[RMDB]
RNA sequence: GGGAACGACUCGAGUAGAGUCGAAAACAAGGGCAUGAGUGAGUUCUCUUUCGUGGCUGAUGAUAUGGCCCUGGAAGGCGCGCGAUUCUAUUUCCGCAAUCAGGAUGUAAGCGAUAGCGAUCUUGAGUCUGCCGCUGCCGGAUGGGUGGACCAGAACGCGUUAAGAGAACUUCGGUUCUCUUAACGCAAAAGAAACAACAACAACAAC
Reactivity to 2A3 in 0.01 (KOAc 150mM, MgCl2 10mM, bicine 150mM(pH8.5), 24C), signal-to-noise 2, nucleotides 027 to 156: c050a080a180g080g000g070c090a100u140g000a060g060u160g000a040g020u160u050c030u000c000u030u040u020c020g030u030g030g070c020u030g010a030u000g020a010u020a080u250g120g010c020c000c010u000g010g010a000a000g020g030c010g000c000g000c030g000a000u000u000c020u040a040u000u000u020c120c070g000c010a020a040u070c080a060g100g040a250u130g150u300a130a040g060c030g080a030u050a030g020c030g000a020u020c000u000u040g000a000g000u000c010u110g060c100c000g000c140u160g040c010c020g080g000a040u010g020g000g010u090g000g030a050c040c000a030g000a140a050c040

An RNA of 207 nucleotides, treated with 2A3 and read out base by base.
For 2A3 the reverse transcriptase was SuperScript II with manganese.
Reactivities are given for positions 27 through 156.
The RNA was probed in 150 mM KOAc, 10 mM MgCl2 and 150 mM bicine (pH 8.5) at 24 C.
The data come from the RNA Mapping Database (RMDB), library OK3TST.